RNA sequence: GGGAACGACUCGAGUAGAGUCGAAAAGAUAUGGAUACACUGAGGGAGCUUUCAGUCGGAAACGACUGGAAGCAUCGAUCUCACAUGUGUAUCCUAAGUCAAAGUGGGGCGGUUCGCCGCCCCACAAGUAUAAUAUCAUGUUCGCAUGAUAUUAUACAAAAGAAACAACAACAACAAC
Reactivity to DMS in 0.01 (KOAc 150mM, MgCl2 10mM, bicine 150mM(pH8.5), 24C), signal-to-noise 4, nucleotides 027 to 126: g000a040u000a300u010g000g000a010u010a010c010a010c020u000g010a070g010g020g010a090g030c000u000u000u000c000a000g010u000c000g010g000a080a090a160c000g010a020c010u000g000g000a000a010g020c020a030u000c230g020a180u010c010u000c000a130c300a090u000g020u000g000u000a000u010c000c000u010a000a060g010u000c030a070a120a150g010u000g000g010g010g050c000g010g000u000u020c220g010c010c010g020c000c000c000c000a000c000a000a080
Reactivity to 2A3 in 0.01 (KOAc 150mM, MgCl2 10mM, bicine 150mM(pH8.5), 24C), signal-to-noise 2, nucleotides 027 to 126: g030a000u060a010u110g010g010a000u000a010c000a000c010u030g020a050g020g140g040a100g020c000u000u010u000c000a010g010u000c000g030g000a070a020a010c010g000a010c000u000g030g000a010a020g000c020a020u040c010g010a060u050c010u040c020a070c020a160u240g000u000g000u000a000u010c000c000u010a000a000g020u020c020a000a030a170g020u030g000g040g010g020c030g030g070u070u130c300g050c130c000g000c080c010c000c000a000c020a010a010
The record gives the reactivity of an RNA of 177 nucleotides to DMS and 2A3. The data come from the RNA Mapping Database (RMDB), library TTRDES. For 2A3 the reverse transcriptase was SuperScript II with manganese. The reactions ran in a buffer of 150 mM KOAc, 10 mM MgCl2 and 150 mM bicine (pH 8.5), at 24 C. For DMS the reverse transcriptase was MarathonRT.